[RMDB]
RNA sequence: GGGAACGACUCGAGUAGAGUCGAAAAGAUAUGGAACCGGUCUGUUCAACAGCUACUCUCGGAAACGAGAGUAGACAUGAAUGGACCCGGUUCCUAAGUCAAAGAAGGCUUGUUCGCAAGCCUUCAACAUUAUUUCCCCGUUCGCGGGGAAAUAAUGAAAAGAAACAACAACAACAAC
Reactivity to 2A3 in 0.01 (KOAc 150mM, MgCl2 10mM, bicine 150mM(pH8.5), 24C), signal-to-noise 1, nucleotides 027 to 126: g010a000u050a030u160g000g000a010a010c000c000g000g000u040c050u030g040u020u000c030a180a150c010a260g030c000u010a010c000u000c000u020c010g030g040a090a100a070c020g020a010g000a000g010u000a000g010a010c000a090u070g040a040a040u010g000g000a010c040c000c010g010g000u000u030c000c010u000a010a010g000u000c040a030a160a280g010a000a000g000g000c000u020u020g010u120u240c300g020c190a010a000g000c000c000u000u010c010a000a000
Reactivity to DMS in 0.01 (KOAc 150mM, MgCl2 10mM, bicine 150mM(pH8.5), 24C), signal-to-noise 3, nucleotides 027 to 126: g020a030u000a300u010g000g000a010a000c000c000g000g000u000c010u010g020u000u010c010a030a040c300a190g030c020u000a000c000u000c000u010c000g020g020a130a110a230c010g010a010g010a010g000u000a000g000a030c090a150u010g000a020a010u000g010g000a010c020c060c060g030g010u000u000c010c000u010a010a080g010u010c040a090a120a150g000a010a000g000g010c010u010u000g010u000u020c210g010c000a000a010g000c000c000u000u010c000a050a150

Annotation:
Conditions: 150 mM KOAc, 10 mM MgCl2 and 150 mM bicine (pH 8.5), 24 C. This 177-nucleotide RNA was probed chemically with 2A3 and DMS. Values cover nucleotides 27 to 126. The 2A3 profile rests on 2,589 reads. It was measured as part of the RMDB library TTRDES.